An RNA of 177 nucleotides, treated with 2A3 and DMS and read out base by base. Conditions: 150 mM KOAc, 10 mM MgCl2 and 150 mM bicine (pH 8.5), 24 C. For 2A3, 7,803 sequencing reads were counted. Reactivities are given for positions 27 through 126.

RNA sequence: GGGAACGACUCGAGUAGAGUCGAAAAAGAUGUCGCAUCCCACAUGGUCAGGCUGACAUUUGGUACUGUGCUUGACGGCAUGACGAAUGGGAACAUCGUUACCCCAGCAGUCAGGAUCACACAGGCAUCGCGUUAUGUUAUUCGUAACAUAACGCGAAAAAGAAACAACAACAACAAC
Reactivity to 2A3 in 0.01 (KOAc 150mM, MgCl2 10mM, bicine 150mM(pH8.5), 24C), signal-to-noise 4, nucleotides 027 to 126: a000g050a040u050g020u040c020g000c100a070u040c010c070c000a020c030a070u180g050g000u060c020a020g030g080c020u050g020a030c020a060u060u060u140g120g010u090a130c040u040g020u040g070c010u050u040g010a030c020g030g100c080a060u080g010a020c030g070a150a070u050g000g010g000a000a080c010a090u100c060g040u050u120a140c000c020c000c020a010g020c020a000g030u020c010a010g000g050a060u030c020a010c000a000c000a060g040g000c020a050
Reactivity to DMS in 0.01 (KOAc 150mM, MgCl2 10mM, bicine 150mM(pH8.5), 24C), signal-to-noise 5, nucleotides 027 to 126: a060g010a020u000g010u010c090g020c060a150u000c010c000c020a150c150a090u000g010g010u010c050a030g000g000c010u000g010a060c060a070u000u000u020g020g020u000a050c090u010g010u000g010c040u000u000g000a050c050g010g010c020a110u000g010a070c060g010a090a110u000g000g000g010a090a150c040a070u000c080g010u010u000a140c110c010c010c080a090g000c080a090g010u000c030a020g010g000a090u000c110a160c050a040c030a050g010g010c100a140